RNA sequence: GGGAACGACUCGAGUAGAGUCGAAAACUAGAUGCGUUCGCGCAUCUAGAAAGGUACAAAAACAUGCAAAUAGUACCAAAGGACAAAAGUCCAAGCAUGAAAAAACUGAGUACUUCGGUACUCAGAACGUAGUAUCGGAGUUCGCUCCGAUACUACGAAAAGAAACAACAACAACAAC
Reactivity to 2A3 in 0.01 (KOAc 150mM, MgCl2 10mM, bicine 150mM(pH8.5), 24C), signal-to-noise 2, nucleotides 027 to 126: c020u010a000g010a000u000g000c000g030u010u080c140g050c020g020c050a000u010c000u020a000g010a020a000a000g000g010u010a000c050a000a200a040a100a020c010a030u010g000c030a070a040a170u090a150g010u000a000c000c000a090a010a000g010g000a030c040a030a300a050a050g010u030c020c000a000a010g000c000a010u000g000a090a060a000a020a010a010c010u010g000a000g000u010a000c000u020u050c210g050g000u010a000c000u010c000a000g010a010a010
Reactivity to DMS in 0.01 (KOAc 150mM, MgCl2 10mM, bicine 150mM(pH8.5), 24C), signal-to-noise 1, nucleotides 027 to 126: c000u000a000g000a000u000g000c020g010u000u020c250g020c040g030c000a000u000c000u000a000g000a050a040a120g040g000u000a020c010a100a090a050a050a110c010a000u000g000c000a130a110a150u000a110g000u000a010c020c000a050a130a180g000g010a040c020a030a130a070a050g000u010c010c010a000a140g000c010a020u010g000a000a140a020a010a140a170c020u000g000a010g000u000a010c000u000u000c150g000g030u000a000c000u000c010a000g000a020a050